[RMDB]
RNA sequence: GGGAACGACUCGAGUAGAGUCGAAAAUAGUACAGGUAAGUACAGUAUAGGUUGAGUCUGUUAGGAGACUCAGGCUAUAGGAUGAGUACUGGUAGUUAUACUAGGCAGUAUAGCUAUUAGUAUUUGCCGUCCUAACAGACGGGUACUUAUCUGUACACACAUGCAAGGACUUCGGUCCUUGCAUGUGAAAAGAAACAACAACAACAAC
Reactivity to 2A3 in 0.01 (KOAc 150mM, MgCl2 10mM, bicine 150mM(pH8.5), 24C), signal-to-noise 4, nucleotides 027 to 156: u220a010g000u000a000c000a010g000g000u000a000a000g000u010a000c020a010g100u080a060u060a150g300g210u030u060g020a020g010u000c010u020g110u140u200a120g070g080a020g050a040c050u010c060a010g010g020c010u010a010u040a160g150g040a090u200g030a010g010u000a000c000u000g000g000u000a000g000u000u000a000u000a010c010u040a070g300g170c150a010g030u000a000u010a000g000c000u000a010u000u000a000g000u000a000u020u000u020g020c000c010g020u000c010c010u010a020a010c000a020g000a000c010g000g000g000u000a000c000u000u000a000u000c000u000g000u000a000c000a000
Background:
This 207-nucleotide RNA was probed chemically with 2A3. 2A3 adducts were read by reverse transcription with SuperScript II with manganese.